RNA sequence: GGGAACGACUCGAGUAGAGUCGAAAAGCACGUCCGCACUAAUGGUGGUUACAAUUCUUGGCAUUUAGUCGAGGGUGAACUAUUGGUGCAAGACUUACGCUUAAAUAAGCUCCUGCAUUGGUCUGAUAUAGCGAGUGCUUCGGCACUCGCAAAAGAAACAACAACAACAAC
Reactivity to 2A3 in 0.01 (KOAc 150mM, MgCl2 10mM, bicine 150mM(pH8.5), 24C), signal-to-noise 3, nucleotides 027 to 129: g000c020a000c050g000u000c010c020g000c000a010c000u000a000a000u010g050g000u030g060g130u060u160a060c090a050a050u010u020c000u010u000g000g000c020a100u040u240u300a080g000u010c020g010a000g000g030g000u000g000a000a000c000u000a010u000u030g000g000u010g020c000a010a000g000a000c000u060u050a060c060g000c000u020u040a050a070a030u180a070a000g000c010u030c000c000u000g030c020a050u010u130g020g020u020c030u070g040a030u060a020u080a110
Reactivity to DMS in 0.01 (KOAc 150mM, MgCl2 10mM, bicine 150mM(pH8.5), 24C), signal-to-noise 4, nucleotides 027 to 129: g060c060a080c170g000u000c030c230g050c080a020c000u000a030a050u010g000g080u020g000g010u000u000a080c180a180a090u000u050c000u010u030g020g010c040a160u120u030u040a130g040u000c020g190a010g070g090g050u020g010a140a010c000u160a010u050u000g020g000u000g030c020a140a080g050a000c000u100u010a070c190g030c010u040u000a060a110a160u040a110a090g020c110u050c020c000u000g070c090a080u000u000g090g000u030c020u060g020a080u070a060u040a060

Structure probing data (2A3 and DMS) for a 170-nucleotide construct. The 2A3 profile rests on 4,233 reads. It was measured as part of the RMDB library 15KLIB. Reactivities are given for positions 27 through 129. The reactions ran in a buffer of 150 mM KOAc, 10 mM MgCl2 and 150 mM bicine (pH 8.5), at 24 C.